Source: RMDB library TTRDES, as collected in RNAgym. This 177-nucleotide RNA was probed chemically with 2A3 and DMS. The 2A3 profile rests on 61,329 reads.
[RMDB]
RNA sequence: GGGAACGACUCGAGUAGAGUCGAAAAGAUAUGGAAAGGGCGAUGCCAUGAUGACCAGCCUCGGAAACGAGGCUGCAAGUGGGUCGAACUACCCUUUCCUAAGUCAAAAGUAGUGUUCGCACUACAACUCUAUGUUAUAGUUCGCUAUAACAUAGAGAAAAGAAACAACAACAACAAC
Reactivity to 2A3 in 0.01 (KOAc 150mM, MgCl2 10mM, bicine 150mM(pH8.5), 24C), signal-to-noise 5, nucleotides 027 to 126: g010a020u080a020u160g000g010a000a000a020g000g000g000c020g040a020u140g300c010c000a020u070g150a280u090g020a040c040c020a010g000c000c000u000c000g010g010a050a090a040c010g000a010g000g000c010u000g000c010a070a090g010u010g000g020g000u010c030g020a060a020c050u180a050c060c000c000u000u000u000c000c000u000a080a030g060u020c040a040a050a090a110g000u010a010g010u010g050u130u130c300g060c090a000c010u010a010c010a020a060
Reactivity to DMS in 0.01 (KOAc 150mM, MgCl2 10mM, bicine 150mM(pH8.5), 24C), signal-to-noise 9, nucleotides 027 to 126: g000a050u000a300u010g010g000a020a020a010g000g040g020c020g010a020u010g020c000c000a010u010g010a110u010g010a150c300c010a000g000c000c000u000c000g010g000a120a110a240c000g010a020g010g000c000u000g000c000a030a070g040u000g000g000g010u000c020g000a070a060c090u020a300c030c000c010u000u000u000c000c000u000a030a070g010u000c040a110a080a130a110g010u000a010g010u000g010u010u020c250g020c010a020c000u000a010c010a090a190